Record summary: This 207-nucleotide RNA was probed chemically with 2A3. The reactions ran in a buffer of 150 mM KOAc, 10 mM MgCl2 and 150 mM bicine (pH 8.5), at 24 C.
RNA sequence: GGGAACGACUCGAGUAGAGUCGAAAACCGUCUUGCAGAACGUAACGGCGGCGAGGUGUCGGUAAAAAUGGGAAAACUGCUGUUUCUCAAAGCGGGGCAGGGGGUGACGGCCAGUGGUAAAAAAAUCCCGCAGAUUACCAUCACCCGCAGCGACGGCCGGAGCAAUUGUUUUCGAACAAUUGCUCCGAAAAGAAACAACAACAACAAC
Reactivity to 2A3 in 0.01 (KOAc 150mM, MgCl2 10mM, bicine 150mM(pH8.5), 24C), signal-to-noise 1, nucleotides 027 to 156: c020c000g040u060c060u060u120g060c070a050g030a300a030c020g030u080a130a070c050g130g020c000g000g010c000g020a160g000g020u040g010u170c280g030g010u050a030a080a040a060a090u120g040g010g000a070a020a050a060c090u090g000c020u030g050u020u060u000c020u000c000a130a140a020g040c030g030g060g000g040c040a050g030g020g000g000g050u030g010a030c000g030g020c020c020a030g050u050g040g140u240a070a070a000a000a000a000a100u010c000c000c010g000c000a000g010a150u020u050a000c010c010a000u020c000a010c000c000c000g040c010a010g000c030g020a050c030g020g020c050